[RMDB]
RNA sequence: GGGAACGACUCGAGUAGAGUCGAAAAUUUCUUCCGAGAUCGCGAGCUCGCCCGAAUAAUCGGUCGACGCGAUCCAGAGGCGGAUGAUUUCCGCGCCGAGGCGGUUCGCGACUUCAUGCGGAUCGAACAUUACCUAGCACUUCGGUGCUAGGUAAUGAAAAGAAACAACAACAACAAC
Reactivity to 2A3 in 0.01 (KOAc 150mM, MgCl2 10mM, bicine 150mM(pH8.5), 24C), signal-to-noise 2, nucleotides 027 to 126: u010u020u040c010u060u000c030c010g050a090g000a110u000c000g000c010g010a030g100c060u040c060g010c020c000c000g040a030a170u300a250a190u130c010g040g000u000c020g020a020c020g030c010g040a010u000c000c010a040g020a060g110g000c010g020g030a030u070g060a060u240u030u050c020c000g010c000g000c050c040g060a080g060g030c030g010g000u010u000c010g050c010g070a050c030u100u110c080a080u210g030c000g000g020a020u030c000g020a060a020
Reactivity to DMS in 0.01 (KOAc 150mM, MgCl2 10mM, bicine 150mM(pH8.5), 24C), signal-to-noise 4, nucleotides 027 to 126: u010u000u010c020u000u000c010c030g010a150g010a020u000c000g020c010g020a150g030c250u000c010g010c090c010c020g000a060a240u010a110a120u000c030g010g000u000c010g020a080c050g000c000g010a010u000c010c040a040g010a110g020g010c030g020g000a030u000g010a220u020u000u000c000c000g020c030g010c120c060g010a140g010g010c010g010g010u000u000c010g020c000g010a110c190u010u000c180a090u010g000c020g000g000a020u000c010g020a110a200
The record gives the reactivity of an RNA of 177 nucleotides to 2A3 and DMS. The RNA was probed in 150 mM KOAc, 10 mM MgCl2 and 150 mM bicine (pH 8.5) at 24 C. It was measured as part of the RMDB library OK2TST. The 2A3 profile rests on 2,780 reads. Reactivities are rounded to 0.1 and cut off at 0 and 3.